[RMDB]
RNA sequence: GGGAACGACUCGAGUAGAGUCGAAAAUUACGACUACGCUUACGCUGCCUAAUAACAGCGAGGCAAUGACCGUUUAACGGUCGCGCCGAUCAGGGCCAUGCCUGAUAACCCUGAUUGGCGACACUUAUCAGGCUGGCGAAAACCGGCUCUCGCCGGGGUUCUAGUCUUACUUCGGUAAGACUAGAACAAAAGAAACAACAACAACAAC
Reactivity to 2A3 in 0.01 (KOAc 150mM, MgCl2 10mM, bicine 150mM(pH8.5), 24C), signal-to-noise 2, nucleotides 027 to 156: u100u080a090c060g080a050c120u100a050c150g010c030u080u050a130c020g000c000u010g020c000c030u160a160a080u080a130a030c000a000g000c000g010a000g020g000c000a000a060u080g010a000c000c000g010u060u040u300a210a060c010g010g000u000c000g000c020g000c010c000g000a000u010c000a000g000g000g000c010c010a000u080g000c000c000u000g000a000u000a010a030c000c000c000u000g000a000u000u010g010g000c000g030a000c000a010c010u190u170a000u020c000a000g010g000c010u050g080g040c110g030a010a110a010a050c000c000g000g020c020u060c070u140c300g000c000c010g000g010g020

Source information
Structure probing data (2A3) for a 207-nucleotide construct. The reactions ran in a buffer of 150 mM KOAc, 10 mM MgCl2 and 150 mM bicine (pH 8.5), at 24 C. For 2A3 the reverse transcriptase was SuperScript II with manganese. For 2A3, 1,799 sequencing reads were counted. Source: RMDB library RSTRND, as collected in RNAgym.